[RMDB]
RNA sequence: GGGAACGACUCGAGUAGAGUCGAAAAGGGGUCUUCGUUUGACGAGCAAGACAUGCCUCCAGUACUGAAGCCUCCACGGUACGGAGGCAACAGCUUGCUCCGAGAAGACGGAGGCACCCAAAAGGCCCGAGACUAGAUUCGUCUAGUCUCGGGCCAACAUACCUGUAGUCUUCGGACUACAGGUAUGAAAAGAAACAACAACAACAAC
Reactivity to 2A3 in 0.01 (KOAc 150mM, MgCl2 10mM, bicine 150mM(pH8.5), 24C), signal-to-noise 1, nucleotides 027 to 156: g000g000g030g040u010c000u010u010c030g000u050u120u200g020a010c010g000a020g010c000a010a000g050a200c110a220u210g010c000c000u000c000c010a090g010u010a000c000u000g020a130a080g010c030c030u010c100c030a080c040g010g010u000a000c020g010g000a010g030g000c020a010a000c030a000g010c000u000u010g000c010u010c010c000g040a030g020a040a030g000a000c000g020g000a000g000g000c030a100c000c000c000a010a290a010a070g030g000c050c020c030g020a000g000a000c000u000a000g010a050u020u050c210g000u010c110u000a000g000u000c000u000c000g010g000g000c000c000a000a000